Chemical mapping of a 170-nucleotide RNA with DMS and 2A3. For 2A3, 1,623 sequencing reads were counted. Conditions: 150 mM KOAc, 10 mM MgCl2 and 150 mM bicine (pH 8.5), 24 C. Source: RMDB library 15KLIB, as collected in RNAgym. For DMS the reverse transcriptase was MarathonRT.
[RMDB]
RNA sequence: GGGAACGACUCGAGUAGAGUCGAAAACGUGAGUGGAAACCUCGUUCUUUAUUGGGGAGUACACUCGAGGAGUGGAAGGCGGGGAGGGCGGGGAGGAGUGUUACCCUACGGGAACUGCUGAGUGCCCAUGCGAGGGCCUUCGGGCCCUCGAAAAGAAACAACAACAACAAC
Reactivity to DMS in 0.01 (KOAc 150mM, MgCl2 10mM, bicine 150mM(pH8.5), 24C), signal-to-noise 2, nucleotides 027 to 129: c000g000u150g000a010g000u000g000g000a140a190a050c000c000u000c200g030u190u090c300u120u190u100a110u100u060g000g080g000g000a100g000u000a180c030a000c000u000c000g000a000g010g010a210g000u090g020g080a090a080g000g000c300g010g000g000g000a200g020g000g000c080g010g010g010g010a000g000g070a270g010u000g000u040u040a120c050c000c030u070a250c130g000g010g000a050a000c000u000g060c110u000g000a070g000u040g000c130c000c000a160u000g070
Reactivity to 2A3 in 0.01 (KOAc 150mM, MgCl2 10mM, bicine 150mM(pH8.5), 24C), signal-to-noise 2, nucleotides 027 to 129: c030g010u050g040a010g000u010g010g000a010a000a010c010c030u110c220g100u180u080c020u180u300u040a080u010u300g000g000g000g000a000g000u000a030c010a010c000u000c000g000a000g020g000a190g030u060g000g050a110a020g000g000c000g000g000g050g070a070g000g050g100c120g000g000g000g070a000g030g020a040g050u000g000u000u030a000c000c000c000u000a000c020g120g000g000a100a010c020u090g000c030u110g010a020g110u140g010c000c000c010a000u080g020